Source information
This 207-nucleotide RNA was probed chemically with DMS and 2A3. For 2A3 the reverse transcriptase was SuperScript II with manganese. The data come from the RNA Mapping Database (RMDB), library M2RFPK. Reactivities are rounded to 0.1 and cut off at 0 and 3. The 2A3 profile rests on 12,274 reads. Values cover nucleotides 27 to 156.
RNA sequence: GGGAACGACUCGAGUAGAGUCGAAAAGAAAUUACGUUUCCUUUACACUUCUCAAAACGGGAUCAAGAGAAGCAAAGCAUCCCUCAUAUCCACGAUGGAGGGUGUCGUGGAGUAUACUGUACCAAAAAGAGCGAACACGGCUUCGGCCGUGUUCGAACAAGUAUCUAAUCUUCGGAUUAGAUACUUGAAAAGAAACAACAACAACAAC
Reactivity to DMS in 0.01 (KOAc 150mM, MgCl2 10mM, bicine 150mM(pH8.5), 24C), signal-to-noise 4, nucleotides 027 to 156: g020a080a040a130u000u010a080c130g010u000u000u000c010c010u000u000u000a120c070a100c010u000u000c010u000c010a050a080a090a150c060g020g000g050a300u000c070a100a300g000a050g010a040a020g020c040a080a050a120g020c060a080u000c010c000c010u000c060a110u000a070u010c020c030a020c010g020a080u000g030g010a050g020g010g040u000g010u000c010g000u000g000g020a100g000u000a100u000a070c070u000g020u010a120c070c050a030a090a080a040a050g000a170g000c000g000a020a020c000a000c000g030g030c010u000u010c300g030g000c000c000g040u010g000u010u010c000g020a010a050
Reactivity to 2A3 in 0.01 (KOAc 150mM, MgCl2 10mM, bicine 150mM(pH8.5), 24C), signal-to-noise 9, nucleotides 027 to 156: g020a010a060a020u160u130a040c080g010u010u030u040c010c000u010u030u070a050c050a030c010u070u040c030u020c020a110a170a110a090c110g060g050g030a080u100c080a170a030g010a010g010a050a010g020c060a060a030a010g040c010a070u050c000c020c000u050c030a070u080a040u090c010c010a010c030g020a010u040g090g060a060g050g040g010u050g000u010c000g000u010g000g010a010g010u010a020u010a060c110u090g080u120a080c030c060a030a080a020a050a030g100a030g070c010g010a000a000c000a000c000g000g010c010u050u070c190g040g000c000c000g000u000g000u000u000c000g000a000a010